[RMDB]
RNA sequence: GGGAACGACUCGAGUAGAGUCGAAAACGUCAAGGAUUCGUCCUUGACGAAAGUCGCGGCUUGAGGGCGUAUACGGCUGCGCACACACACGACCCUCAUGCCAAACAGGUGGAUUCGUCCACCUGAAGGCUAAAUACUUGUUCGCAAGUAUUUAGCCAAAAGAAACAACAACAACAAC
Reactivity to 2A3 in 0.01 (KOAc 150mM, MgCl2 10mM, bicine 150mM(pH8.5), 24C), signal-to-noise 8, nucleotides 027 to 126: c010g000u000c000a000a000g010g000a020u040u100c180g060u030c070c000u000u000g000a000c000g000a010a010a000g070u040c030g010c110g140g000c010u010u020g000a010g000g020g010c020g020u030a060u020a070c070g040g000c040u120g070c100g050c030a040c000a000c000a000c000a010c100g300a300c010c000c000u000c000a010u020g000c000c000a040a050a020c000a000g000g000u010g000g010a020u030u060c200g050u020c050c000a020c000c000u000g020a050a030
Reactivity to DMS in 0.01 (KOAc 150mM, MgCl2 10mM, bicine 150mM(pH8.5), 24C), signal-to-noise 5, nucleotides 027 to 126: c020g020u000c000a000a020g010g000a030u000u010c220g020u000c000c010u010u010g000a010c000g010a030a060a100g000u010c120g020c200g000g010c020u000u000g010a020g000g010g020c010g020u000a060u000a110c180g010g010c040u000g010c070g010c080a070c090a110c130a080c130a020c020g000a110c010c000c000u000c010a010u010g010c010c000a040a120a210c000a010g000g020u010g010g000a040u000u020c160g000u000c000c000a000c000c010u000g000a040a100